[RMDB]
This 177-nucleotide RNA was probed chemically with DMS and 2A3. For 2A3 the reverse transcriptase was SuperScript II with manganese. DMS adducts were read by reverse transcription with MarathonRT. 2A3 is a SHAPE reagent: it acylates the 2'-hydroxyl of flexible nucleotides of all four kinds. The 2A3 profile rests on 1,534 reads. The DMS profile rests on 1,474 reads. The RNA was probed in 150 mM KOAc, 10 mM MgCl2 and 150 mM bicine (pH 8.5) at 24 C.
RNA sequence: GGGAACGACUCGAGUAGAGUCGAAAAGGAGGCCCUCUCACGCGCGCCGCCCACGAGCUCGGCCACGGCGUCCUCGGUGCUCUUCCCCUCGCCCAGGACGAGCCUAGAGAGGUCACGCGCAGCCAGCAGCAAAAUGGACUUUCGAGUCCAUUUUGCUAAAAGAAACAACAACAACAAC
Reactivity to DMS in 0.01 (KOAc 150mM, MgCl2 10mM, bicine 150mM(pH8.5), 24C), signal-to-noise 1, nucleotides 027 to 126: g000g000a110g000g000c000c020c050u020c040u000c000a090c060g020c050g000c070g010c030c000g040c060c010c000a090c160g020a100g040c110u000c100g000g000c020c050a150c160g000g000c050g000u000c020c040u000c090g000g030u080g020c090u000c000u000u000c110c010c090c040u010c120g000c000c000c050a060g000g000a000c120g000a070g010c070c010u030a110g020a120g000a150g000g000u000c100a010c040g000c050g020c020a070g030c020c030a020g000c060
Reactivity to 2A3 in 0.01 (KOAc 150mM, MgCl2 10mM, bicine 150mM(pH8.5), 24C), signal-to-noise 1, nucleotides 027 to 126: g100g000a040g010g040c000c020c000u000c000u000c000a060c000g030c020g000c000g000c000c010g030c020c010c000a060c030g060a010g030c050u070c130g000g000c020c000a110c040g030g000c000g030u020c030c000u020c000g000g060u140g020c010u010c010u030u030c000c000c000c040u090c010g040c000c000c000a010g000g010a030c040g010a020g020c010c000u170a070g010a010g020a020g130g010u050c020a000c030g030c000g020c000a030g040c010c010a050g010c020